[RMDB]
RNA sequence: GGGAACGACUCGAGUAGAGUCGAAAAGUAAAUAAAGCGCACCAAUAUGGAGGUGCGCAACCAGCGUGACCUAGGAACACGCAUCCACGCGUCUCCUAAGACGGGAAAGGUAUUCCAAAUAAAAAAACAACAAUUAUUACUUCGGUAAUAAUUGUUGAAAAGAAACAACAACAACAAC
Reactivity to DMS in 0.01 (KOAc 150mM, MgCl2 10mM, bicine 150mM(pH8.5), 24C), signal-to-noise 3, nucleotides 027 to 126: g020u000a050a080a110u000a060a090a190g000c000g040c000a020c000c010a090a180u010a240u020g000g000a130g020g000u000g020c010g010c000a010a010c040c020a130g010c030g010u000g000a130c120c050u000a070g000g010a050a060c120a010c010g000c020a130u010c130c140a100c090g020c030g020u000c070u000c100c060u000a050a030g000a080c040g010g000g000a040a070a030g000g000u000a060u000u000c020c030a050a080a110u060a010a000a100a070a100a100a100
Reactivity to 2A3 in 0.01 (KOAc 150mM, MgCl2 10mM, bicine 150mM(pH8.5), 24C), signal-to-noise 3, nucleotides 027 to 126: g030u050a010a110a170u150a090a120a010g000c000g010c000a010c010c010a030a040u240a230u300g130g010a090g010g000u000g000c000g010c010a000a000c000c000a010g060c000g020u020g030a060c000c070u110a080g030g060a080a000c020a000c020g000c000a030u080c030c010a070c060g090c000g000u020c020u010c020c010u040a050a030g020a010c030g020g010g080a050a110a050g060g000u030a100u070u040c020c020a020a100a030u220a040a110a020a000a000a010a010
This 177-nucleotide RNA was probed chemically with DMS and 2A3. The reactions ran in a buffer of 150 mM KOAc, 10 mM MgCl2 and 150 mM bicine (pH 8.5), at 24 C. 2A3 adducts were read by reverse transcription with SuperScript II with manganese.